[RMDB]
RNA sequence: GGGAACGACUCGAGUAGAGUCGAAAAGUCGGAACAUAACGACGGCGGGCCGGUGGGGAAUCAGGGGGCUACCGUGGGAUAGCAAUGAGACAGCCCCUCCGAUGGCACCAAGCGUCGGAUCGCGGAAAACACUGUAAGCCCUUCGGGGCUUACAGAACGAAUACGAGAAGUUCGCUUCUCGUAUUCGAAAAGAAACAACAACAACAAC
Reactivity to 2A3 in 0.01 (KOAc 150mM, MgCl2 10mM, bicine 150mM(pH8.5), 24C), signal-to-noise 1, nucleotides 027 to 156: g020u030c010g010g050a280a030c050a240u130a080a010c110g000a000c010g010g020c000g000g000g000c070c010g000g090u030g000g010g010g010a030a160u110c050a140g030g070g000g050g020c030u060a040c020c020g010u070g070g130g000a130u070a100g050c010a000a090u130g020a020g000a070c040a020g040c020c010c000c000u000c000c020g030a050u020g060g040c040a060c030c020a150a010g030c000g080u090c000g010g030a020u030c040g000c110g100g000a000a120a010a000c080a010c010u030g000u000a000a000g010c000c060c000u010u010c140g030g000g010g010c000u000u000a000c000a000g000a000a000
An RNA of 207 nucleotides, treated with 2A3 and read out base by base.
Source: RMDB library M2RFPK, as collected in RNAgym.